[RMDB]
RNA sequence: GGGAACGACUCGAGUAGAGUCGAAAAGGUCUGAUUGUGGGAUGGCCUGAGGCUGGGAUCUACUGCGUAGCGGACCAGCUCAUGUUGACGGAACGUCCGCACUAAGCUUGCCAUCAAUAUGGGUGCCAUGGAGGAGUCCGUGGCAUUCAGGUUGGCUCUUACCCAGCUUGUUCGCAAGCUGGGUAAGAAAAGAAACAACAACAACAAC
Reactivity to 2A3 in 0.01 (KOAc 150mM, MgCl2 10mM, bicine 150mM(pH8.5), 24C), signal-to-noise 2, nucleotides 027 to 156: g030g030u020c040u040g060a110u220u080g040u080g040g080g010a020u070g040g010c000c060u020g010a040g080g010c020u010g000g070g000a010u020c000u050a050c010u060g150c100g120u090a040g010c000g000g000a000c000c000a000g000c000u000c010a090u150g060u160u150g050a040c080g080g030a110a060c060g050u000c020c000g000c000a040c060u120a070a000g050c030u060u080g020c010c000a030u030c010a030a130u160a140u180g000g000g000u000g000c000c000a000u030g000g010a060g060g030a080g250u030c010c000g000u000g000g000c000a010u000u010c000a000g000g000u000u010g020g000c000u000